An RNA of 177 nucleotides, treated with DMS and read out base by base.
RNA sequence: GGGAACGACUCGAGUAGAGUCGAAAAGAUAUGGAAAUUAAAUGAUAUCCUACCGUACAACAGCGUACUGAUUCGGAAACGAAUUUACGACAUGUACGAGUAGGAUAUCAUUUAAUUUCCUAAGUCAGGUACAACAUACGUUCGCGUAUGUUGUACCAAAAGAAACAACAACAACAAC
Reactivity to DMS in 0.01 (KOAc 150mM, MgCl2 10mM, bicine 150mM(pH8.5), 24C), signal-to-noise 2, nucleotides 027 to 126: g000a080u000a300u010g000g000a000a000a000u000u000a010a010a000u030g000a000u000a000u000c000c000u000a000c000c000g000u020a000c000a090a150c300a220g030c010g020u000a020c300u010g000a000u000u000c000g010g000a150a110a300c030g000a020a020u000u000u000a000c000g000a040c130a130u000g000u010a000c010g020a130g000u000a000g000g000a000u000a000u000c000a000u000u000u000a000a010u000u000u000c000c000u000a030a040g010u000c060a040
The DMS profile rests on 1,447 reads.
DMS adducts were read by reverse transcription with MarathonRT.